[RMDB]
RNA sequence: GGGAACGACUCGAGUAGAGUCGAAAAGAUAUGGAUCGAUGACUGGGAGAUCUUAGGUCGGAAACGACCUUUGAUCGAGGAUCAGUAUCGAUCCUAAGUCAAACGAUUGUCCUUCGGGACAAUCGAAGAAGAGGAGUAACUUCGGUUACUCCUCUUCAAAAGAAACAACAACAACAAC
Reactivity to DMS in 0.01 (KOAc 150mM, MgCl2 10mM, bicine 150mM(pH8.5), 24C), signal-to-noise 2, nucleotides 027 to 126: g000a000u010a080u030g010g000a010u010c000g020a010u000g020a040c000u000g010g010g020a200g010a020u000c000u000u000a010g010g040u000c000g020g010a030a010a060c000g010a010c000c000u000u000u000g010a000u000c000g000a150g010g000a130u010c000a020g000u000a020u000c000g020a000u000c000c000u000a010a070g000u000c010a100a110a300c020g010a000u000u000g010u000c000c000u000u040c210g030g010g010a010c000a000a000u000c010g000a070a060
Reactivity to 2A3 in 0.01 (KOAc 150mM, MgCl2 10mM, bicine 150mM(pH8.5), 24C), signal-to-noise 2, nucleotides 027 to 126: g000a000u020a010u050g000g010a000u000c000g000a010u040g300a070c020u010g020g100g130a300g020a080u010c000u000u000a000g030g000u000c010g000g010a000a000a000c010g010a000c000c000u000u000u010g010a000u010c000g020a060g040g110a180u060c000a000g010u020a000u000c010g010a000u000c000c000u000a000a000g000u000c000a010a100a160c030g020a000u000u010g000u020c000c000u020u150c300g090g010g000a000c000a010a000u030c000g020a030a070